Annotation
Structure probing data (DMS and 2A3) for a 177-nucleotide construct. For 2A3, 3,727 sequencing reads were counted.
RNA sequence: GGGAACGACUCGAGUAGAGUCGAAAACAUAAAAGCACAAGCCAAUGUGCUUCCCUCUAAAGAGGUUGACGGCGAGCGGUAUCAUGCUGAAAGGAAGCAGGGGUACCGCAGACGCCGACCAUCCCCACCGUCCCUGUUAUUUCGAUAACAGGGACGGAAAAGAAACAACAACAACAAC
Reactivity to DMS in 0.01 (KOAc 150mM, MgCl2 10mM, bicine 150mM(pH8.5), 24C), signal-to-noise 2, nucleotides 027 to 126: c100a120u020a030a010a060a000g040c000a000c000a010a030g020c210c300a300a120u000g000u010g000c000u000u000c050c000c000u010c010u040a120a120a130g000a030g000g000u000u010g020a140c030g040g000c020g030a110g010c010g030g000u030a000u000c000a020u000g080c000u010g010a110a170a170g010g020a260a020g000c000a000g070g020g010g000u000a000c000c020g000c000a000g000a170c000g010c000c000g000a050c060c030a100u020c020c000c000c150a160
Reactivity to 2A3 in 0.01 (KOAc 150mM, MgCl2 10mM, bicine 150mM(pH8.5), 24C), signal-to-noise 4, nucleotides 027 to 126: c040a040u120a070a050a010a000g010c000a000c010a000a020g060c010c010a020a030u010g000u000g000c010u000u000c000c000c000u020c020u140a210a190a010g040a000g010g020u010u020g060a040c010g000g010c000g000a030g000c000g000g000u000a000u010c000a040u000g030c010u040g060a160a120a110g200g120a130a010g020c020a000g120g240g000g000u000a000c000c000g000c000a010g010a010c000g020c000c000g000a000c010c020a070u030c000c020c000c010a060